[RMDB]
RNA sequence: GGGAACGACUCGAGUAGAGUCGAAAAAAUGGCUUCGGCCAUUUGUAGCUCCUAAGUCUCCGUUGAUCGAUCCCUGAGCAAUGACGUGGUCGGAAACGACCAUAAGACAGCUCGGGAUCGGGAGGAGAUAUGGAACCGCGCCUACUUCGGUAGGCAACCACUACAUGCAAUUCGUUGCAUGUAGUGGAAAAGAAACAACAACAACAAC
Reactivity to DMS in 0.01 (KOAc 150mM, MgCl2 10mM, bicine 150mM(pH8.5), 24C), signal-to-noise 1, nucleotides 027 to 156: a010a000u000g000g000c030u000u000c300g050g000c000c000a000u000u000u000g030u010a070g030c030u000c000c000u000a050a250g020u010c010u030c000c000g000u000u040g000a080u000c000g000a020u000c010c010c000u010g040a080g030c020a170a080u010g000a160c130g000u030g040g020u020c000g010g000a160a140a300c030g010a000c000c000a000u000a020a160g020a220c050a090g020c030u000c000g000g000g000a010u000c000g000g000g010a010g040g010a020g030a020u000a100u020g030g000a090a060c000c010g040c070g010c000c020u020a010c010u020u000c230g040g020u000a000g000g010c040a010a020
Reactivity to 2A3 in 0.01 (KOAc 150mM, MgCl2 10mM, bicine 150mM(pH8.5), 24C), signal-to-noise 4, nucleotides 027 to 156: a000a000u020g010g020c040u090u100c300g130g000c010c000a000u010u010u020g000u030a030g020c040u000c020c010u030a150a030g010u000c000u000c000c000g150u180u020g020a020u020c000g000a000u000c020c010c140u240g010a000g000c040a130a220u100g040a040c060g000u000g020g000u010c010g000g040a110a060a040c000g000a000c010c010a000u000a010a010g050a030c020a100g060c010u010c010g010g000g000a000u000c000g000g000g000a010g000g000a010g000a000u010a010u020g010g020a010a030c030c040g070c040g000c090c000u020a030c000u050u060c250g080g000u000a010g010g020c010a000a010

The record gives the reactivity of an RNA of 207 nucleotides to DMS and 2A3. The RNA was probed in 150 mM KOAc, 10 mM MgCl2 and 150 mM bicine (pH 8.5) at 24 C. 2A3 adducts were read by reverse transcription with SuperScript II with manganese. DMS adducts were read by reverse transcription with MarathonRT.